[RMDB]
RNA sequence: GGGAACGACUCGAGUAGAGUCGAAAAGAUAUGGAGCGAUGAUGCUCAUAAGUCCGGGUCGGAAACGACCCAGGACUCCGCAUAUCGCUCCUAAGUCAAAAGCCAUACUACUUCGGUAGUAUGGCAAUCAUGGCUUUAGGUUCGCCUAAAGCCAUGAAAAAGAAACAACAACAACAAC
Reactivity to DMS in 0.01 (KOAc 150mM, MgCl2 10mM, bicine 150mM(pH8.5), 24C), signal-to-noise 1, nucleotides 027 to 126: g000a010u010a010u000g000g000a020g010c000g000a030u010g020a040u000g020c000u020c210a170u000a220a010g000u000c010c000g000g000g010u000c000g050g010a020a010a060c010g030a000c000c000c000a020g040g000a000c000u000c170c260g000c030a010u000a030u000c000g000c030u000c000c000u000a000a060g000u000c020a130a110a170a190g010c020c000a020u000a010c020u010a000c000u000u010c230g050g000u000a010g010u000a000u010g000g020c000a010a010
Reactivity to 2A3 in 0.01 (KOAc 150mM, MgCl2 10mM, bicine 150mM(pH8.5), 24C), signal-to-noise 1, nucleotides 027 to 126: g000a000u020a010u050g000g000a000g020c000g030a020u300g050a030u020g030c040u160c300a280u300a190a010g010u000c000c000g000g070g030u000c010g000g000a000a000a020c000g010a000c000c060c000a000g000g000a000c000u030c050c200g000c000a000u010a010u000c030g000c020u000c000c000u030a000a000g010u000c010a080a020a040a120g000c000c000a000u000a000c000u000a010c000u040u070c200g200g000u020a000g000u000a010u000g000g000c000a000a000

This 177-nucleotide RNA was probed chemically with DMS and 2A3.
The RNA was probed in 150 mM KOAc, 10 mM MgCl2 and 150 mM bicine (pH 8.5) at 24 C.